This 207-nucleotide RNA was probed chemically with DMS and 2A3. For 2A3, 1,115 sequencing reads were counted. DMS adducts were read by reverse transcription with MarathonRT. Conditions: 150 mM KOAc, 10 mM MgCl2 and 150 mM bicine (pH 8.5), 24 C. The data come from the RNA Mapping Database (RMDB), library OK3TST.
RNA sequence: GGGAACGACUCGAGUAGAGUCGAAAAUCUGGACCGAGGCGUCGACCGACGAUGCGGUCACGGUGAUGGGUCAGGCGCCGGACGGCACCGCGGAGGGGUCGACGUGGACGAUCGAGCGCGCCGAGAAGGCUGGCUAUGUCCCGACGAUCGACGAGAAAAAGACCAAUUAGUUCGCUAAUUGGUCUUUAAAAGAAACAACAACAACAAC
Reactivity to DMS in 0.01 (KOAc 150mM, MgCl2 10mM, bicine 150mM(pH8.5), 24C), signal-to-noise 1, nucleotides 027 to 156: u020c080u000g030g000a030c000c000g000a250g030g010c010g020u000c000g000a030c030c010g030a100c000g010a220u020g000c050g040g000u000c010a050c020g000g020u000g000a120u010g020g050g000u000c070a150g020g000c060g010c000c010g030g010a050c050g020g020c000a050c000c000g030c020g000g010a240g050g000g030g020u000c000g030a000c000g100u000g010g020a080c030g000a060u000c010g020a160g000c050g050c080g010c020c030g020a090g000a110a170g030g000c030u000g010g020c050u000a130u010g000u000c000c000c000g030a110c000g010a160u000c010g020a120c010g000a200g000a070a140
Reactivity to 2A3 in 0.01 (KOAc 150mM, MgCl2 10mM, bicine 150mM(pH8.5), 24C), signal-to-noise 2, nucleotides 027 to 156: u070c050u110g100g050a040c060c000g100a110g060g040c020g020u000c000g030a040c000c010g070a230c000g020a010u030g010c010g060g000u020c040a040c030g000g000u030g030a130u150g040g120g090u140c060a050g120g050c030g000c010c000g000g030a070c070g080g020c160a000c000c000g000c030g020g000a050g010g070g000g030u000c010g000a000c000g000u030g000g020a000c000g010a010u060c030g000a010g000c100g010c010g010c030c030g030a050g080a160a110g020g000c030u040g040g000c060u090a140u180g100u070c010c010c010g050a030c040g000a040u040c010g010a040c020g070a040g120a090a190